[RMDB]
RNA sequence: GGGAACGACUCGAGUAGAGUCGAAAAUGGAAUUACUCAGUUUCAAAAGGGCAAAGAGUUUGAAUUUGCAGAUGGUCAAGGUGUGCCAGUUGCACCAGGGAUACCUGCCACUGAGGCAAAAGGUUACACUUCAUGCUGCAUUCGUGCAGCAUGAAGUAAAAGAAACAACAACAACAAC
Reactivity to DMS in 0.01 (KOAc 150mM, MgCl2 10mM, bicine 150mM(pH8.5), 24C), signal-to-noise 2, nucleotides 027 to 126: u000g020g010a080a070u010u010a060c080u010c050a040g020u010u000u010c050a030a070a070a130g020g000g000c070a040a050a100g000a080g010u000u020u000g030a050a150u000u000u000g020c020a030g020a060u000g020g000u000c100a100a060g020g010u000g030u010g010c020c060a130g010u000u010g020c040a040c040c030a090g010g000g000a050u000a030c050c060u000g020c020c190a080c060u000g000a100g000g000c030a010a030a060a060g010g000u000u010a080c100
Reactivity to 2A3 in 0.01 (KOAc 150mM, MgCl2 10mM, bicine 150mM(pH8.5), 24C), signal-to-noise 1, nucleotides 027 to 126: u110g010g020a000a090u040u030a090c040u020c040a030g040u000u000u070c100a130a130a070a010g050g030g040c040a040a090a040g120a040g000u050u150u240g060a060a060u000u020u170g020c000a000g050a130u040g000g000u090c050a080a090g010g050u020g000u000g080c050c060a050g000u070u060g020c040a080c040c010a040g080g050g010a010u130a040c010c000u010g000c010c000a040c040u030g000a000g010g070c030a030a000a130a000g120g040u040u070a010c000

This 177-nucleotide RNA was probed chemically with DMS and 2A3. The RNA was probed in 150 mM KOAc, 10 mM MgCl2 and 150 mM bicine (pH 8.5) at 24 C. In probing experiments dimethyl sulfate is read out at A N1 and C N3, which are open when not base-paired.